[RMDB]
The record gives the reactivity of an RNA of 177 nucleotides to 2A3 and DMS. The reactions ran in a buffer of 150 mM KOAc, 10 mM MgCl2 and 150 mM bicine (pH 8.5), at 24 C.

RNA sequence: GGGAACGACUCGAGUAGAGUCGAAAAUACCAAUGGUUCGCCAUUGGUACUUGUAUUGACGAAUACUACCGUUGAAGUAUUCAGGUCUCAUAACUACGGAUAUACACUAGAGUUUCGACUCUAGUAAGCGUACCAUGUACUUCGGUACAUGGUACGCAAAAGAAACAACAACAACAAC
Reactivity to 2A3 in 0.01 (KOAc 150mM, MgCl2 10mM, bicine 150mM(pH8.5), 24C), signal-to-noise 2, nucleotides 027 to 126: u020a000c000c000a000a010u010g030g010u020u010c190g040c040c000a000u010u010g010g000u000a050c010u030u110g090u080a150u040u170g140a050c080g000a020a000u000a000c020u040a100c010c070g050u020u130g100a100a000g020u030a000u000u000c040a020g060g090u000c020u020c050a110u060a170a070c070u090a050c080g100g030a060u040a010u010a190c080a000c050u010a010g030a010g020u040u030u100c150g100a020c010u000c020u010a000g000u010a010a010
Reactivity to DMS in 0.01 (KOAc 150mM, MgCl2 10mM, bicine 150mM(pH8.5), 24C), signal-to-noise 1, nucleotides 027 to 126: u000a020c030c000a000a000u000g020g010u000u000c220g040c000c000a000u000u000g000g010u000a040c040u020u000g000u010a160u000u000g020a160c130g010a020a020u000a000c000u000a080c030c090g000u000u000g010a110a040g010u000a030u000u000c030a150g020g010u000c000u000c070a120u010a080a090c090u000a030c050g010g000a300u030a040u010a140c220a080c010u000a040g000a050g000u000u000u000c100g020a020c000u000c000u000a010g020u010a010a140
For 2A3 the reverse transcriptase was SuperScript II with manganese.
Reactivities are rounded to 0.1 and cut off at 0 and 3.
As a SHAPE reagent, 2A3 marks flexible, mostly unpaired nucleotides at the ribose 2'-OH.
Source: RMDB library M2PK50, as collected in RNAgym.